[RMDB]
Structure probing data (2A3 and DMS) for a 177-nucleotide construct.
Source: RMDB library OK1LIB, as collected in RNAgym.
The RNA was probed in 150 mM KOAc, 10 mM MgCl2 and 150 mM bicine (pH 8.5) at 24 C.
As a SHAPE reagent, 2A3 marks flexible, mostly unpaired nucleotides at the ribose 2'-OH.
2A3 adducts were read by reverse transcription with SuperScript II with manganese.
The DMS profile rests on 3,861 reads.
For DMS the reverse transcriptase was MarathonRT.
RNA sequence: GGGAACGACUCGAGUAGAGUCGAAAAGGGAGAGCCGAGCAGAGGCAUAGCGAACUGCGCACGGGGAAGCCUUGAGGGAAGGCCGUAGGACCCGGGUUCGAUUCCCGGCGGCUCCACCGAAGGGCCAACCCUAUACGAGCUUCGGCUCGUAUAGGGUAAAAGAAACAACAACAACAAC
Reactivity to 2A3 in 0.01 (KOAc 150mM, MgCl2 10mM, bicine 150mM(pH8.5), 24C), signal-to-noise 3, nucleotides 027 to 126: g030g040g000a070g020a010g050c010c030g010a010g020c030a020g030a060g050g060c070a060u090a020g050c050g080a040a040c030u070g010c030g000c060a050c040g030g000g000g030a050a010g020c000c000u030u020g000a050g010g020g030a080a040g020g000c010c000g030u090a090g080g190a090c000c000c000g000g000g000u030u050c010g010a040u070u100c010c000c000g000g000c010g020g000c000u020c020c010a060c010c010g010a020a010g020g000g000c000c010a010
Reactivity to DMS in 0.01 (KOAc 150mM, MgCl2 10mM, bicine 150mM(pH8.5), 24C), signal-to-noise 4, nucleotides 027 to 126: g020g030g000a100g020a120g020c030c030g030a140g000c060a080g000a120g020g030c130a120u020a060g020c100g030a090a120c030u000g020c040g010c120a120c100g000g000g000g000a200a130g000c020c020u020u020g000a300g020g010g050a200a180g020g000c000c030g010u010a110g000g000a160c200c040c030g000g000g020u000u060c210g010a300u020u050c000c000c000g000g000c050g000g000c000u000c070c030a280c000c050g000a210a080g000g000g020c000c080a130